[RMDB]
RNA sequence: GGGAACGACUCGAGUAGAGUCGAAAAAGUUCUAGUCCUCACCUAAGAUCAGACUGACAAGGCCCUCAAAGAAAGAGCACUCGGUUGGGCUUUGUGGUGGGGAUAAGUGUCUCAUUUUUAGUCCCAAAUUAAAAACGAGAUUUUGGGCUGUACAUCAUAAUACGUAAAUAUUCGUAUUUACGUAUUAAAAAGAAACAACAACAACAAC
Reactivity to 2A3 in 0.01 (KOAc 150mM, MgCl2 10mM, bicine 150mM(pH8.5), 24C), signal-to-noise 3, nucleotides 027 to 156: a010g060u060u020c020u030a030g050u000c000c000u000c010a000c000c010u090a110a030g020a140u120c050a060g170a240c090u180g020a000c010a000a010g000g020c000c020c010u010c050a160a190a000g080a080a080a010g030a030g020c010a010c060u040c080g090g000u080u020g020g000g000c000u000u010u020g020u010g010g020u000g000g000g000g000a000u030a020a000g000u010g040u030c010u000c030a070u030u130u060u070u300a010g070u140c010c000c000a000a010a020u050u070a050a040a050a040a040c100g040a130g000a130u010u040u050u030g000g000g000c020u050g050u150a110c030a080u120c000a020
Reactivity to DMS in 0.01 (KOAc 150mM, MgCl2 10mM, bicine 150mM(pH8.5), 24C), signal-to-noise 4, nucleotides 027 to 156: a100g010u000u000c040u000a270g020u000c010c010u010c010a040c010c000u010a100a070g020a140u000c080a130g010a110c060u000g020a140c040a100a090g000g030c010c010c010u000c060a070a100a160g020a110a070a120g000a100g020c060a080c060u000c030g030g020u010u000g010g030g020c030u000u000u000g020u000g010g050u000g010g020g030g020a010u000a010a100g010u000g010u010c000u020c010a090u020u000u000u000u000a050g000u000c050c070c120a080a070a080u010u010a020a030a020a030a040c040g010a040g020a090u010u000u000u010g010g020g020c060u010g010u000a060c090a170u010c040a270
The record gives the reactivity of an RNA of 207 nucleotides to 2A3 and DMS. For 2A3, 2,048 sequencing reads were counted. Reactivities are rounded to 0.1 and cut off at 0 and 3. The data come from the RNA Mapping Database (RMDB), library OK3TST. Reactivities are given for positions 27 through 156.